Source: RMDB libraries RFM100 and RFMREP, as collected in RNAgym. Chemical mapping of a 177-nucleotide RNA with DMS and 2A3.
RNA sequence: GGGAACGACUCGAGUAGAGUCGAAAAGGCCGGCUGCCUUCAAAUGCAGCUUGGCUGUGACACACAGUGGGAAAAAGCAGGACUAACCCUGCCAGGUCCUAGAAGCUUUCAGAUUCAUCGCAUAGAAAAUUUUAAAGUAUUUCGAUACUUUAAAAUUAAAAGAAACAACAACAACAAC
Reactivity to DMS in 0.01 (KOAc 150mM, MgCl2 10mM, bicine 150mM(pH8.5), 24C), signal-to-noise 7, nucleotides 027 to 126: g010g000c010c010g000g000c010u000g010c000c070u020u010c300a070a170a130u010g000c010a000g000c000u000u030g040g010c000u000g010u020g000a130c100a080c100a090c100a080g010u010g000g000g000a040a070a070a170a170g000c000a030g000g010a140c100u020a120a130c180c000c010u000g000c010c060a100g020g020u000c010c010u000a070g000a110a120g000c060u000u000u000c040a060g000a120u010u010c020a050u010c050g010c090a090u020a100g010a060a040
Reactivity to 2A3 in 0.01 (KOAc 150mM, MgCl2 10mM, bicine 150mM(pH8.5), 24C), signal-to-noise 5, nucleotides 027 to 126: g010g010c000c000g010g000c000u000g010c020c000u120u120c080a080a080a050u120g000c000a000g020c000u060u110g010g000c010u010g060u090g050a020c010a010c000a000c020a130g090u130g040g070g010a040a070a000a000a000g010c010a020g020g020a040c070u100a060a090c030c000c010u000g010c010c000a020g050g040u000c000c000u040a060g030a110a020g030c020u060u130u120c050a050g010a140u100u020c010a050u050c050g030c060a040u070a100g140a060a190